[RMDB]
RNA sequence: GGGAACGACUCGAGUAGAGUCGAAAACGGGUAUCUCGCCCAAGACCUGAACCUGGCAGGACUCACACCGGGUGUGUCGACUCUGGCCAUCACCGUUGGCGCAGGUUCUACUACUGCUGGCGCUGACGGCCAGCGCAGCUCCAUCGUCGCGUCGACGCUAUUAGAGAACAUUCGUGUUCUCUAAUAGAAAAGAAACAACAACAACAAC
Reactivity to DMS in 0.01 (KOAc 150mM, MgCl2 10mM, bicine 150mM(pH8.5), 24C), signal-to-noise 3, nucleotides 027 to 156: c100g020g010g020u000a050u010c060u000c070g010c020c020c030a070a120g010a260c020c020u000g010a090a090c040c010u010g000g030c040a130g020g000a100c030u000c060a190c110a090c030c020g040g000g010u000g020u000g020u000c040g020a070c040u000c020u000g010g020c020c010a080u010c000a030c040c020g020u000u000g020g020c010g040c030a110g010g010u000u000c100u000a080c010u010a010c020u010g020c010u010g000g010c020g000c040u000g020a050c090g010g010c020c010a020g010c080g000c070a080g010c010u000c030c040a100u000c070g010u000c040g000c040g030u010c020g010a120c080g000
Reactivity to 2A3 in 0.01 (KOAc 150mM, MgCl2 10mM, bicine 150mM(pH8.5), 24C), signal-to-noise 6, nucleotides 027 to 156: c050g020g030g010u100a120u160c140u110c130g030c020c010c010a050a030g110a090c000c000u020g010a030a010c000c010u010g020g000c010a030g030g030a140c030u040c060a050c020a050c040c020g030g020g000u050g050u040g020u000c030g020a050c020u000c030u130g020g000c010c000a040u040c030a030c060c030g020u020u020g050g000c090g010c070a030g040g000u070u100c080u140a140c030u020a040c020u070g070c010u050g080g020c010g010c030u010g020a040c020g030g010c010c010a020g000c030g020c020a020g020c010u040c060c030a160u120c050g090u060c040g000c020g080u040c030g020a000c010g000
This 207-nucleotide RNA was probed chemically with DMS and 2A3. It was measured as part of the RMDB library OK3TST. For DMS, 7,175 sequencing reads were counted. The 2A3 profile rests on 6,822 reads. The RNA was probed in 150 mM KOAc, 10 mM MgCl2 and 150 mM bicine (pH 8.5) at 24 C.